Source: RMDB library RSTRND, as collected in RNAgym. Chemical mapping of a 207-nucleotide RNA with 2A3. For 2A3, 1,225 sequencing reads were counted. The RNA was probed in 150 mM KOAc, 10 mM MgCl2 and 150 mM bicine (pH 8.5) at 24 C. High 2A3 reactivity points to a flexible backbone, as in loops and unpaired stretches.
[RMDB]
RNA sequence: GGGAACGACUCGAGUAGAGUCGAAAAAGUGGGAUACGCUAAAUUUUUCCGUCUGUAAAGUUUAGAAGAGAUUAUCAGACUAGCGAUGCAUGAUGCCUGUUAGGCGGCUAAUGUUCAGCGAAACCUUAAUAGCAUGACUAUGAACGUAGAUGUCUAAGCAUCAUUGUCAGUUCGCUGACAAUGAUGCAAAAGAAACAACAACAACAAC
Reactivity to 2A3 in 0.01 (KOAc 150mM, MgCl2 10mM, bicine 150mM(pH8.5), 24C), signal-to-noise 2, nucleotides 027 to 156: a000g100u170g000g100g010a010u020a070c010g000c010u010a030a020a070u050u050u010u020u050c060c010g000u000c010u000g030u030a000a040a000g020u000u010u040a030g000a020a020g040a010g020a060u130u100a110u270c020a000g010a000c000u020a020g000c010g000a010u040g010c010a010u000g020a020u270g010c000c000u090g050u060u030a000g000g060c010g020g000c010u030a020a010u050g030u030u060c070a000g000c000g040a020a010a010c000c040u100u100a050a050u000a010g010c010a040u040g000a010c030u040a060u300g140a090a030c060g020u040a030g010a140u080g030u000c010u000a080a030